Chemical mapping of a 207-nucleotide RNA with 2A3 and DMS.
[RMDB]
RNA sequence: GGGAACGACUCGAGUAGAGUCGAAAAUACUCCAUAAACAGAGGUAUGGUACAAGAGGUAACGUGUCAUCCAAGGUGACUUUCCUGGCAGCCACCAGUAAACUGACUCCGGACAGAUAGGACUCUUUUGUUGCCGCCAAGGCAUACUUACAAUGACACGUGAUGGUAAAUUUCGAUUUACCAUCACGAAAAGAAACAACAACAACAAC
Reactivity to 2A3 in 0.01 (KOAc 150mM, MgCl2 10mM, bicine 150mM(pH8.5), 24C), signal-to-noise 5, nucleotides 027 to 156: u110a020c050u010c020c010a040u130a080a110a020c070a040g050a020g050g020u060a040u080g020g010u070a040c040a050a040g030a030g080g050u060a090a000c050g050u040g010u050c010a030u020c030c050a060a050g060g000u050g030a040c010u040u040u050c030c010u010g020g010c020a030g020c020c010a010c000c010a020g020u080a040a080a080c050u040g070a040c000u010c020c030g030g010a030c020a030g080a040u100a030g040g010a040c010u000c000u110u060u060u090g050u030u030g010c020c010g040c080c050a070a020g010g000c010a010u040a040c010u060u020a030c050a070a180u230g090a020c030a000
Reactivity to DMS in 0.01 (KOAc 150mM, MgCl2 10mM, bicine 150mM(pH8.5), 24C), signal-to-noise 3, nucleotides 027 to 156: u000a060c020u010c010c010a120u000a120a100a150c100a080g000a110g030g020u010a050u010g040g030u010a070c030a070a070g010a080g010g030u000a050a100c120g010u000g020u000c020a100u000c020c030a090a120g050g010u000g000a040c040u010u000u000c020c010u000g020g010c060a090g000c050c080a050c040c010a080g000u000a040a080a130c040u010g000a090c020u000c030c020g000g020a090c040a080g000a130u000a070g010g000a070c040u000c030u000u000u020u010g010u000u010g000c000c020g020c020c070a060a080g020g000c020a040u000a040c100u000u000a080c090a050a060u000g020a060c060a180
Source: RMDB library OK3TST, as collected in RNAgym. 2A3 adducts were read by reverse transcription with SuperScript II with manganese.